[RMDB]
RNA sequence: GGGAACGACUCGAGUAGAGUCGAAAAUUGGCUACGACGCCGAUCGCAUCCAUCCGGGAUGGCAACACCUUGCGGUAGGCGAUGUGGUUCGACUGGCUCCGCCGGGGUGGCUGGGAUUGCCGGACGGCGGUCGUCAGCCGUUCGCGGCUGACGACCGAAAAGAAACAACAACAACAAC
Reactivity to 2A3 in 0.01 (KOAc 150mM, MgCl2 10mM, bicine 150mM(pH8.5), 24C), signal-to-noise 1, nucleotides 027 to 126: u080u040g010g000c020u020a000c010g050a000c080g050c000c000g070a030u050c000g020c010a040u010c000c000a070u000c040c040g200g050g120a030u050g170g000c010a010a010c020a040c050c020u110u100g050c000g060g000u010a030g010g000c000g000a000u070g050u050g000g080u040u190c000g010a010c060u060g020g000c010u070c100c030g000c020c000g040g020g040g080u120g020g000c130u120g060g050g000a170u000u270g120c050c000g000g120a000c010g000g040